Notes:
The record gives the reactivity of an RNA of 177 nucleotides to DMS and 2A3. It was measured as part of the RMDB library M2PK90. Conditions: 150 mM KOAc, 10 mM MgCl2 and 150 mM bicine (pH 8.5), 24 C. For DMS, 4,031 sequencing reads were counted.
RNA sequence: GGGAACGACUCGAGUAGAGUCGAAAAUAAAAUCGUAGGGCGAGACGAUCGACGUAAAUCGCUCAAACUACUCGAGACCAAAGGAAUACGCUUGGGUAACUCGCUCUAAUCCCGAGCGAUAAAUGAAACUUCCUAUAAAGUUCGCUUUAUAGGAAGUAAAAGAAACAACAACAACAAC
Reactivity to DMS in 0.01 (KOAc 150mM, MgCl2 10mM, bicine 150mM(pH8.5), 24C), signal-to-noise 4, nucleotides 027 to 126: u010a090a060a130a190u000c020g010u000a070g000g000g010c040g000a030g010a070c020g030a040u000c050g000a030c040g020u010a020a070a060u000c150g010c130u000c120a060a090a140c030u000a000c000u010c020g010a010g010a150c050c030a060a110a100g010g010a120a090u010a080c030g010c010u000u000g000g020g000u000a170a100c020u000c000g000c000u010c000u020a170a110u000c010c000c010g000a000g000c000g010a040u000a020a090a110u010g010a070a080
Reactivity to 2A3 in 0.01 (KOAc 150mM, MgCl2 10mM, bicine 150mM(pH8.5), 24C), signal-to-noise 2, nucleotides 027 to 126: u050a010a070a000a010u020c000g000u000a020g010g000g000c000g000a000g010a010c000g020a020u060c030g040a020c050g040u060a010a030a130u130c080g020c080u040c120a030a040a000c010u000a000c000u000c000g030a020g010a070c040c000a080a080a060g150g050a160a120u100a160c030g000c000u000u010g000g000g000u020a030a020c010u000c010g000c010u000c000u000a040a080u090c020c000c010g000a000g010c000g000a020u040a030a060a010u150g100a140a100